Description:
The record gives the reactivity of an RNA of 207 nucleotides to DMS and 2A3. 2A3 adducts were read by reverse transcription with SuperScript II with manganese. For DMS, 17,415 sequencing reads were counted. DMS adducts were read by reverse transcription with MarathonRT. The 2A3 profile rests on 10,479 reads. Values are in units of 0.01, from 0 to 300, in steps of 10. Reactivities are given for positions 27 through 156.
RNA sequence: GGGAACGACUCGAGUAGAGUCGAAAACGGCUUAAAAGGCAACUCAGUAGUGCUGUGGCCGGUGGGCUUCUUGACUGGUUAGGAGCCCAGGUGCUAUUGAUCCACCAUAUGACUUGUUGGUUCAAAGUUAUGGUAUUUGGGUUACAUCCUUCAGAGAGUAUUCUGUUCUAUUCGUAGAACAGAAUACAAAAGAAACAACAACAACAAC
Reactivity to DMS in 0.01 (KOAc 150mM, MgCl2 10mM, bicine 150mM(pH8.5), 24C), signal-to-noise 5, nucleotides 027 to 156: c030g010g010c010u010u010a070a090a100a120g000g020c040a060a090c060u000c080a140g020u010a120g010u000g010c030u010g020u000g020g040c010c010g010g000u000g000g010g010c040u020u010c010u010u000g000a250c080u000g030g010u010u000a050g020g010a110g020c000c010c010a010g000g010u000g010c000u000a100u000u000g010a060u010c030c020a070c020c020a070u000a100u000g000a140c110u000u000g010u010u000g010g000u000u000c030a040a100a150g020u000u000a090u000g020g020u000a080u000u000u000g010g010g010u000u010a100c070a130u000c020c020u000u000c040a130g010a200g000a230
Reactivity to 2A3 in 0.01 (KOAc 150mM, MgCl2 10mM, bicine 150mM(pH8.5), 24C), signal-to-noise 9, nucleotides 027 to 156: c010g010g000c030u120u140a070a070a070a100g050g010c030a050a090c050u070c160a170g060u250a030g020u100g030c020u040g030u130g070g010c010c020g020g000u050g020g020g010c030u040u010c010u060u120g090a140c050u070g040g060u140u090a010g000g010a010g010c000c000c000a000g000g010u020g000c000u040a050u100u060g010a020u020c010c000a010c020c010a040u070a070u180g170a120c090u050u040g020u050u050g070g010u060u050c020a050a030a060g060u150u110a100u140g020g000u020a040u030u040u040g020g010g010u020u060a050c030a090u040c010c000u030u040c020a020g070a010g010a010